[RMDB]
RNA sequence: GGGAACGACUCGAGUAGAGUCGAAAAUACAUUUCAAAACAACCAGUAUUAGUGAAGUCUUCGAUCGUGCGCUCUUCCUCUGCACGAAUAUUCCAAUCUAGAGGAAACUUUAUCUUAUUUAAGACGACCAUAGUCGCUCGUUCGCGAGCGACUAUGGAAAAGAAACAACAACAACAAC
Reactivity to 2A3 in 0.01 (KOAc 150mM, MgCl2 10mM, bicine 150mM(pH8.5), 24C), signal-to-noise 3, nucleotides 027 to 126: u090a010c010a050u130u140u160c100a040a030a070a030c090a050a140c050c060a030g150u040a110u100u090a030g050u020g160a200a040g060u000c020u080u090c070g110a090u050c000g030u000g000c020g030c070u020c050u060u000c010c000u000c000u000g010c070a000c000g030a040a080u180a090u010u090c000c000a020a060u000c060u090a030g000a000g070g000a020a000a090c020u040u160u130a110u200c030u070u110a190u200u230u050a080a020g060a020c100g040a020
Chemical mapping of a 177-nucleotide RNA with 2A3. Reactivities are rounded to 0.1 and cut off at 0 and 3. For 2A3, 1,017 sequencing reads were counted. 2A3 is a SHAPE reagent: it acylates the 2'-hydroxyl of flexible nucleotides of all four kinds. Conditions: 150 mM KOAc, 10 mM MgCl2 and 150 mM bicine (pH 8.5), 24 C. Source: RMDB library OK1LIB, as collected in RNAgym.